[RMDB]
Structure probing data (2A3 and DMS) for a 177-nucleotide construct. 2A3 is a SHAPE reagent: it acylates the 2'-hydroxyl of flexible nucleotides of all four kinds. Values cover nucleotides 27 to 126. It was measured as part of the RMDB library OK2TST. The RNA was probed in 150 mM KOAc, 10 mM MgCl2 and 150 mM bicine (pH 8.5) at 24 C. For DMS the reverse transcriptase was MarathonRT.

RNA sequence: GGGAACGACUCGAGUAGAGUCGAAAAGAUUCAUACAUACGCACAUGGGAUGUGAUUACCCAUGUAGUACGCGAACGCUUCCGCUCUUAAUAGCACCUCUCGCAUGGUGUCCACGAGAGCUCUGCUGUCGUUCUGAAGAUUUCGAUCUUCAGAACGAAAAAGAAACAACAACAACAAC
Reactivity to 2A3 in 0.01 (KOAc 150mM, MgCl2 10mM, bicine 150mM(pH8.5), 24C), signal-to-noise 5, nucleotides 027 to 126: g020a070u050u060c040a020u060a230c020a030u060a020c050g020c060a010c010a010u010g000g030g040a060u090g130u210g240a210u160u220a100c020c000c000a000u000g000u000a010g010u010a010c050g010c030g030a030a000c040g010c060u050u000c020c020g030c040u000c030u070u210a190a160u090a110g000c000a060c080c000u020c000u000c010g010c060a080u090g060g000u180g130u150c050c010a020c010g010a010g010a000g000c000u000c010u020g000c000u010g000
Reactivity to DMS in 0.01 (KOAc 150mM, MgCl2 10mM, bicine 150mM(pH8.5), 24C), signal-to-noise 5, nucleotides 027 to 126: g000a170u000u010c030a080u000a160c110a160u000a030c030g000c210a030c010a010u000g000g000g010a140u000g010u010g020a150u000u010a110c000c000c000a030u000g010u000a060g010u010a010c070g000c110g000a020a030c060g000c090u000u000c040c030g000c120u000c050u000u010a090a110u000a020g000c000a010c160c000u000c020u000c020g000c110a100u000g010g030u010g000u010c060c070a120c060g000a020g000a030g000c010u000c010u000g000c020u000g020